[RMDB]
RNA sequence: GGGAACGACUCGAGUAGAGUCGAAAACUUUUUUUCCAUCUUUAGAAAACUACAUGGGAACAAACAGAUCGAACAGUUUUGAAGCUACUGUGUGUGUGAAUGAACACUCUUGCUUUAUUCCAGAAUACGUAAUAAUUACGUUCGCGUAAUUAUUACGAAAAGAAACAACAACAACAAC
Reactivity to 2A3 in 0.01 (KOAc 150mM, MgCl2 10mM, bicine 150mM(pH8.5), 24C), signal-to-noise 7, nucleotides 027 to 126: c010u170u110u010u020u010u060u000c010c010a030u000c050u090u220u080a140g080a110a270a080a100c060u160a070c040a100u090g020g020g050a060a030c030a040a130a030c030a060g080a140u120c040g050a040a030c020a050g020u010u020u040u050g010a020a010g000c020u050a050c080u100g020u020g010u010g010u010g010u040g210a190a180u170g040a070a010c000a000c020u010c020u030u050g010c010u030u050u040a070u040u030c010c010a020g070a180a060u150a080
Reactivity to DMS in 0.01 (KOAc 150mM, MgCl2 10mM, bicine 150mM(pH8.5), 24C), signal-to-noise 7, nucleotides 027 to 126: c030u000u000u000u010u000u000u000c020c020a030u010c080u010u000u000a110g000a150a090a080a100c120u010a050c300a050u000g000g010g010a060a050c170a050a070a100c180a050g010a080u000c130g000a080a080c200a060g010u000u000u010u000g010a050a040g010c020u000a040c110u000g010u010g010u000g010u010g020u000g010a100a100u010g010a080a020c020a020c020u000c040u010u000g010c020u010u000u000a080u020u000c010c010a140g010a070a080u000a100
Structure probing data (2A3 and DMS) for a 177-nucleotide construct. Values cover nucleotides 27 to 126. The reactions ran in a buffer of 150 mM KOAc, 10 mM MgCl2 and 150 mM bicine (pH 8.5), at 24 C.